RNA sequence: GGGAACGACUCGAGUAGAGUCGAAAACUCUUGUUGCAAUUCGGGCCAAAAGCAUGGCAGGCCCACAUCAGGCACCUCGAAGUGGGCCACAAGAGGCUGGAGGACAUGCUGGCAGAGACCAGAGCGGCCCUAAUUCUAGCUUCGGCUAGAAUUAGGGAAAAGAAACAACAACAACAAC
Reactivity to DMS in 0.01 (KOAc 150mM, MgCl2 10mM, bicine 150mM(pH8.5), 24C), signal-to-noise 1, nucleotides 027 to 126: c010u000c040u000u000g000u010u000g040c090a080a150u020u000c110g000g020g030c000c040a030a270a150a170g000c050a050u000g050g000c110a220g040g020c010c010c000a000c030a050u010c080a090g040g010c190a060c120c000u000c050g010a090a060g060u000g000g050g030c000c020a000c110a020a120g000a220g010g000c060u000g020g010a300g000g000a050c080a030u000g000c010u000g000g000c000a120g000a200g020a000c050c020a050g000a110g020c130g000g000